An RNA of 177 nucleotides, treated with DMS and 2A3 and read out base by base. Source: RMDB library OK2TST, as collected in RNAgym. Conditions: 150 mM KOAc, 10 mM MgCl2 and 150 mM bicine (pH 8.5), 24 C. Reactivities are given for positions 27 through 126. 2A3 is a SHAPE reagent: it acylates the 2'-hydroxyl of flexible nucleotides of all four kinds. For DMS the reverse transcriptase was MarathonRT. The DMS profile rests on 3,832 reads. For 2A3, 2,825 sequencing reads were counted.
RNA sequence: GGGAACGACUCGAGUAGAGUCGAAAAACGACAAAGGUUAGUUGCUGCCCAUCGUGGUCUUCGUCAAACGACAUUGUAUGGUGGACAUGCGACUCAAGAUGAGACUGAUUUACCACAGGCUAGAAAAACUAAAUGCUUUCUUCGGAAAGCAUUUAGUAAAAGAAACAACAACAACAAC
Reactivity to DMS in 0.01 (KOAc 150mM, MgCl2 10mM, bicine 150mM(pH8.5), 24C), signal-to-noise 4, nucleotides 027 to 126: a060c090g020a120c190a070a090a120g020g000u010u010a020g010u010u000g020c000u000g000c010c010c010a010u000c020g040u000g020g000u010c050u000u000c110g020u000c120a090a090a120c230g010a030c090a060u000u000g010u010a030u000g010g030u000g010g000a030c020a030u010g020c000g020a010c030u010c160a080a080g010a070u000g020a080g030a070c010u000g000a080u010u000u000a070c070c070a110c030a020g000g000c050u010a090g020a060a040a090a070
Reactivity to 2A3 in 0.01 (KOAc 150mM, MgCl2 10mM, bicine 150mM(pH8.5), 24C), signal-to-noise 2, nucleotides 027 to 126: a000c080g120a020c090a100a130a020g120g030u100u070a020g030u020u020g000c000u020g000c000c010c000a010u020c020g050u050g050g120u040c030u050u020c050g090u050c070a180a230a140c120g020a010c030a030u010u110g050u130a030u040g000g000u010g020g000a010c010a020u200g000c000g020a010c000u020c050a040a040g050a120u130g030a010g020a040c000u010g030a080u050u060u110a030c010c000a020c020a050g030g000c010u100a070g150a090a080a030a000